[RMDB]
RNA sequence: GGGAACGACUCGAGUAGAGUCGAAAAAGGCGCGCAUGCCCGACGGCGAGGAUCUCGUCGUGACCCAUGGCGAUGCCUGCUUGCCGAAUAUCAUGGUGGAAAAUGGCCGCUUUUCUGGAUUCAUCGACUGUGGCCGGCUGGGUGUGGCGGACCGCUAUCAGGACAUAGCGUUGGCUACCCGUGAUAUUGCUGAAGAGCUUGGCGGCGAAUGGGCUGACCGCUUCCUCGUGCUUUACGGUAUCGCCGCUCCCGAUUCGCAGCGCAUCGGAAAUGUGUUCGCACAUUUCAAAAGAAACAACAACAACAAC
Reactivity to DMS in 0.01 (KOAc 150mM, MgCl2 10mM, bicine 150mM(pH8.5), 24C), signal-to-noise 9, nucleotides 027 to 266: a110g000g010c040g020c150g010c140a080u010g010c010c010c060g010a070c080g000g000c000g010a020g010g010a100u020c040u000c070g010u000c000g010u000g000a140c040c030c010a110u000g010g010c000g010a030u000g000c000c010u000g000c010u000u000g010c180c000g000a110a090u000a060u010c030a020u000g000g020u000g000g000a050a060a090a130u010g000g010c010c020g020c190u000u010u010u020c130u010g010g000a130u010u010c090a070u000c060g010a040c030u000g020u000g010g020c130c010g010g010c080u010g010g010g020u000g010u000g000g010c010g010g000a030c060c010g010c110u000a030u000c080a070g000g000a080c300a100u000a020g010c010g020u000u010g010g000c010u000a090c130c000c000g010u000g000a080u010a040u010u010g000c020u000g000a120a160g000a040g000c020u000u000g010g010c010g000g000c060g000a110a060u010g010g000g000c010u000g000a040c050c060g010c060u000u000c080c060u000c060g000u000g010c070u010u010u000a150c110g000g000u000a050u010c030g010c010c010g000c010u000c010c020c010g000a090u010u010c140g010c020a030g010c140g010c030a020u000c050g000
Reactivity to 2A3 in 0.01 (KOAc 150mM, MgCl2 10mM, bicine 150mM(pH8.5), 24C), signal-to-noise 6, nucleotides 027 to 266: a000g040g000c040g010c020g010c080a060u270g010c010c010c010g020a020c010g010g020c000g010a010g120g040a140u120c030u010c080g000u000c000g020u020g050a100c000c010c020a050u080g100g030c000g020a050u010g000c000c000u010g010c000u020u070g020c010c010g030a060a040u100a020u170c020a020u040g020g030u040g060g080a020a080a060a100u080g030g000c010c000g050c060u090u060u080u090c100u140g070g030a100u160u070c030a040u080c050g060a020c000u020g010u010g030g010c000c000g010g000c020u060g010g020g030u070g010u030g010g000c020g010g020a030c000c000g000c020u030a020u080c040a040g040g010a030c020a090u100a010g010c000g030u020u070g050g020c010u030a050c000c000c010g010u000g010a060u100a040u130u110g030c020u070g040a110a060g030a020g130c020u060u080g070g010c020g010g010c020g020a080a070u100g070g020g000c010u000g020a030c010c060g010c010u020u030c000c010u070c040g040u040g070c030u040u060u100a020c000g010g010u030a100u160c010g000c000c000g000c000u010c000c000c000g020a150u140u140c050g000c030a020g020c020g000c060a020u010c000g010